[RMDB]
RNA sequence: GGGAACGACUCGAGUAGAGUCGAAAAGAUAUGGAACGAGCCUGGACAUGCUAAACAUUCGGAAACGAAUGCUUAGCAACAGCCAGGACCCUCGUUCCUAAGUCAAACCUGACGUUCGCGUCAGGAACCAUACCGCAAUCUUCGGAUUGCGGUAUGGAAAAGAAACAACAACAACAAC
Reactivity to 2A3 in 0.01 (KOAc 150mM, MgCl2 10mM, bicine 150mM(pH8.5), 24C), signal-to-noise 1, nucleotides 027 to 126: g030a010u130a030u160g000g010a010a020c000g000a020g060c000c000u020g020g030a070c040a120u150g030c000u030a010a010a000c010a020u020u000c000g070g000a110a100a050c010g000a010a020u010g000c000u000u010a000g000c000a000a040c080a030g030c000c010a000g000g000a010c030c000c010u020c000g010u000u000c000c000u020a110a000g060u020c050a040a080a210c020c000u000g020a010c030g020u070u100c300g030c010g170u010c000a010g000g000a000a040
Reactivity to DMS in 0.01 (KOAc 150mM, MgCl2 10mM, bicine 150mM(pH8.5), 24C), signal-to-noise 2, nucleotides 027 to 126: g000a040u010a300u000g000g000a000a000c020g010a010g030c020c000u010g000g000a160c170a220u000g010c000u000a000a020a000c000a010u000u000c000g000g000a070a130a250c000g010a000a000u000g010c010u000u000a000g010c000a030a020c300a140g060c010c000a000g000g020a100c270c300c020u000c000g000u000u020c000c000u050a020a180g010u000c060a140a100a130c000c000u000g000a010c000g020u000u020c230g060c020g010u010c000a000g030g000a050a150